[RMDB]
RNA sequence: GGGAACGACUCGAGUAGAGUCGAAAAGUCGAGAAUCGUGACUCGUUGCGAAGGAAGUUGGCGAACGCAUACUCUGACUUGAAGGGUGAUGAGAUCAACUCUAGGGUCAGAACGCUUAACGGCUUUCUAAUUAAAUGGCAUUCGUGCCAUUUAAUUAAAAAGAAACAACAACAACAAC
Reactivity to DMS in 0.01 (KOAc 150mM, MgCl2 10mM, bicine 150mM(pH8.5), 24C), signal-to-noise 9, nucleotides 027 to 126: g010u010c010g010a050g000a080a090u010c030g020u000g000a150c030u010c050g020u010u010g000c090g010a130a100g010g010a070a080g000u000u010g000g010c070g010a090a100c210g010c070a090u020a120c120u010c000u000g000a020c010u000u000g000a110a110g000g000g020u000g010a060u010g000a160g030a300u010c070a060a020c000u000c000u010a300g000g010g000u010c000a010g000a020a070c080g010c010u010u010a080a090c070g000g000c000u000u000u000c020
Reactivity to 2A3 in 0.01 (KOAc 150mM, MgCl2 10mM, bicine 150mM(pH8.5), 24C), signal-to-noise 9, nucleotides 027 to 126: g120u040c020g010a020g060a100a170u040c030g020u050g110a160c020u000c050g050u040u080g050c060g070a090a060g060g020a060a040g030u050u030g080g010c030g020a080a030c040g020c060a010u050a130c020u010c000u010g000a010c010u010u030g040a160a160g020g000g020u040g020a080u110g110a100g070a200u070c040a050a070c000u000c010u030a010g000g000g010u000c000a000g010a020a020c020g020c010u070u090a060a020c020g030g010c000u030u000u000c020
Chemical mapping of a 177-nucleotide RNA with DMS and 2A3. It was measured as part of the RMDB library OK1LIB. The DMS profile rests on 43,775 reads. Values are in units of 0.01, from 0 to 300, in steps of 10. Reactivities are given for positions 27 through 126. Conditions: 150 mM KOAc, 10 mM MgCl2 and 150 mM bicine (pH 8.5), 24 C.